[RMDB]
RNA sequence: GGGAACGACUCGAGUAGAGUCGAAAAUGAAGUACUGUUCAUACAUGAUGAGAUAUUUAUAUGUUGGCAUAGUAGUGAGAUCGACGUUUGGUAAUGGCAAUGUAUUAAGAUUAACUCCAUAAUGUCUAGCAGCAUCUGCGAUGUUAUAAGUGUCGUCCCCAAUAGGAGAUUUCGAUCUCCUAUUGGGAAAAGAAACAACAACAACAAC
Reactivity to DMS in 0.01 (KOAc 150mM, MgCl2 10mM, bicine 150mM(pH8.5), 24C), signal-to-noise 4, nucleotides 027 to 156: u010g000a070a090g040u010a040c050u010g020u010u000c060a110u010a090c050a040u010g010a100u010g010a100g020a080u010a050u000u000u000a090u000a070u030g000u000u010g020g010c020a050u000a090g030u000a070g000u010g010a090g010a100u000c030g010a070c080g050u010u010u000g010g020u000a060a070u000g020g020c030a060a060u000g030u000a080u000u000a070a120g000a110u010u010a050a090c040u000c010c010a050u000a040a050u000g020u010c020u010a090g010c050a070g000c050a090u010c020u000g010c040g000a100u000g010u000u000a080u010a060a170g000u000g020u000c020g000u000c050
Reactivity to 2A3 in 0.01 (KOAc 150mM, MgCl2 10mM, bicine 150mM(pH8.5), 24C), signal-to-noise 7, nucleotides 027 to 156: u080g020a060a020g040u060a070c050u040g040u050u070c030a010u060a140c040a040u090g020a030u080g030a070g040a080u110a080u100u180u050a150u050a050u110g040u040u030g020g030c020a040u030a060g070u020a010g010u040g060a080g020a040u060c040g060a040c050g040u030u050u080g030g010u060a070a060u040g030g020c030a030a010u030g040u070a080u080u120a070a020g020a060u040u090a040a020c030u000c030c020a020u060a150a040u070g020u010c020u030a020g010c010a010g000c010a050u040c040u060g000c020g020a010u040g020u100u090a080u040a110a040g020u020g020u060c020g020u040c010

Notes
Chemical mapping of a 207-nucleotide RNA with DMS and 2A3. It was measured as part of the RMDB library OK3TST. For 2A3 the reverse transcriptase was SuperScript II with manganese. For 2A3, 6,128 sequencing reads were counted. Values cover nucleotides 27 to 156. Values are in units of 0.01, from 0 to 300, in steps of 10.